[RMDB]
RNA sequence: GGGAACGACUCGAGUAGAGUCGAAAAUUGAUCGAGAACAGCAGAAGAAGUGACGAACCUUUUAGUUUGCAGGCGAUGAAAGAAGCAGCUACAGAGCUUCUAUUUGGAGGUCAUGAAACCACCGCCACCCUUGUAUUAGGUUCGCCUAAUACAAGGGAAAAGAAACAACAACAACAAC
Reactivity to 2A3 in 0.01 (KOAc 150mM, MgCl2 10mM, bicine 150mM(pH8.5), 24C), signal-to-noise 3, nucleotides 027 to 126: u090u070g010a010u030c020g020a000g040a130a030c020a030g060c010a000g020a080a010g020a070a010g100u020g050a050c050g010a020a070c000c000u060u100u040u060a090g040u030u110u130g010c040a020g040g000c040g030a060u080g050a120a100a050g010a020a020g000c030a000g020c020u110a050c040a080g120a000g060c030u030u000c010u030a180u040u080u020g050g010a020g020g000u010c010a030u060g040a030a010a020c020c030a020c020c010g000c030c020a050
Reactivity to DMS in 0.01 (KOAc 150mM, MgCl2 10mM, bicine 150mM(pH8.5), 24C), signal-to-noise 4, nucleotides 027 to 126: u010u010g010a100u010c030g020a140g020a100a070c080a040g000c060a060g010a070a070g000a060a050g010u000g010a060c050g000a080a070c080c030u020u000u000u010a080g010u010u000u010g010c050a100g030g000c070g010a070u010g000a030a050a050g020a040a020g000c020a060g020c100u020a110c270a080g000a090g010c000u010u000c020u010a120u000u000u000g010g010a080g010g000u000c040a060u010g010a040a070a090c110c120a050c060c040g000c040c040a180